[RMDB]
RNA sequence: GGGAACGACUCGAGUAGAGUCGAAAAGGAGUGGUGAUGACUCUUAACGAGCAUGCUGCCUUCAAGCAUCUGUUUAACAAAGCACAUCUUGCACCCCCCUUAAUCCAUUUAACCCUGAGUGGACACAGCACAUGUUUCAGAGAGCACAGGGUUGGGGGAUAGACCGACAUUUCGAUGUCGGUCUAUCAAAAGAAACAACAACAACAAC
Reactivity to DMS in 0.01 (KOAc 150mM, MgCl2 10mM, bicine 150mM(pH8.5), 24C), signal-to-noise 1, nucleotides 027 to 156: g030g000a050g040u010g020g050u010g020a190u000g010a060c000u000c000u010u000a060a210c180g000a040g070c070a100u000g040c000u020g000c120c130u000u010c090a130a240g000c080a030u020c090u000g000u000u000u000a120a140c130a070a070a130g010c060a040c030a050u000c020u020u030g000c000a100c000c000c000c010c000c050u000u000a010a070u020c030c000a070u010u020u000a020a090c000c000c010u000g010a030g040u000g010g000a040c000a300c200a080g040c180a110c120a130u000g000u000u000u000c000a140g020a210g000a160g020c060a060c040a000g020g020g030u000u020g020g010g020g000
Reactivity to 2A3 in 0.01 (KOAc 150mM, MgCl2 10mM, bicine 150mM(pH8.5), 24C), signal-to-noise 1, nucleotides 027 to 156: g100g000a010g050u070g000g010u060g030a120u070g140a140c000u030c000u030u040a120a020c050g010a000g060c040a000u080g060c040u010g040c010c070u060u130c050a030a000g000c010a050u020c030u060g220u110u100u100a160a130c110a120a070a000g000c020a010c010a090u050c020u090u160g040c060a140c010c000c000c000c000c020u000u020a090a040u050c000c000a040u060u040u030a020a010c000c010c010u000g020a020g010u000g000g000a000c000a000c040a130g010c010a040c010a160u030g020u010u040u020c070a030g060a000g030a000g030c030a010c020a070g000g000g050u010u010g020g000g000g010